Chemical mapping of a 177-nucleotide RNA with 2A3. As a SHAPE reagent, 2A3 marks flexible, mostly unpaired nucleotides at the ribose 2'-OH. 2A3 adducts were read by reverse transcription with SuperScript II with manganese. The RNA was probed in 150 mM KOAc, 10 mM MgCl2 and 150 mM bicine (pH 8.5) at 24 C.
[RMDB]
RNA sequence: GGGAACGACUCGAGUAGAGUCGAAAAUGAAAGUGGAAUUCACUCAGUGUUCAAUGAAUGUGGUCUCCAAAACGCUUUUUAAAAAGAGUCCAAUUCAUCAUCACAUUGAUAGGAACAUGAUUAAUUUCAUAUAGACGGUGUUCGCACCGUCUAUAUGAAAAGAAACAACAACAACAAC
Reactivity to 2A3 in 0.01 (KOAc 150mM, MgCl2 10mM, bicine 150mM(pH8.5), 24C), signal-to-noise 1, nucleotides 027 to 126: u060g020a010a050a070g020u030g000g090a140a300u070u000c000a010c000u030c010a010g000u010g000u120u090c040a010a030u000g060a030a010u230g000u030g240g000u000c010u030c080c030a030a030a040a030c140g130c030u200u020u120u210u300a110a080a000a000a010g010a000g000u000c000c000a000a000u050u000c000a000u010c020a010u040c000a020c000a020u020u090g000a010u100a050g020g020a020a030c040a030u020g000a000u130u040a110a050u000u010u010